Annotation:
The record gives the reactivity of an RNA of 177 nucleotides to DMS and 2A3. The 2A3 profile rests on 7,554 reads. For 2A3 the reverse transcriptase was SuperScript II with manganese. For DMS the reverse transcriptase was MarathonRT. Values cover nucleotides 27 to 126. The RNA was probed in 150 mM KOAc, 10 mM MgCl2 and 150 mM bicine (pH 8.5) at 24 C.
RNA sequence: GGGAACGACUCGAGUAGAGUCGAAAAGAUAUGGACUGAUGCCGGAGCGACGAUCUAGCUCGGAAACGAGCUAGGGAGCUCGCAUUCAGUCCUAAGUCAAACUCGUGCGAGUUCGCUCGCACGAGAAGAACAAUAGAGUCUUCGGACUCUAUUGUUCAAAAGAAACAACAACAACAAC
Reactivity to DMS in 0.01 (KOAc 150mM, MgCl2 10mM, bicine 150mM(pH8.5), 24C), signal-to-noise 4, nucleotides 027 to 126: g010a030u000a230u010g000g000a020c000u010g000a010u000g010c020c300g000g020a020g020c000g000a080c260g000a040u010c010u000a000g010c000u000c000g000g000a020a060a110c000g020a010g000c010u000a000g000g000g000a020g010c000u020c120g000c000a020u000u000c000a000g010u000c000c000u000a010a020g010u000c010a110a130a300c010u000c000g010u000g010c000g000a010g010u000u010c300g020c000u010c000g010c000a000c000g000a010g020a020a080
Reactivity to 2A3 in 0.01 (KOAc 150mM, MgCl2 10mM, bicine 150mM(pH8.5), 24C), signal-to-noise 4, nucleotides 027 to 126: g000a010u020a030u090g000g000a010c020u020g010a000u040g070c220c300g300g030a040g010c000g300a300c000g010a010u000c010u000a000g000c000u000c000g000g000a030a040a000c010g000a000g000c010u000a010g010g000g010a010g000c030u070c250g000c010a010u150u200c000a000g010u000c000c000u000a020a000g010u020c030a050a060a190c000u000c000g000u020g000c000g020a020g000u070u110c250g140c140u000c010g000c000a000c000g000a000g000a000a020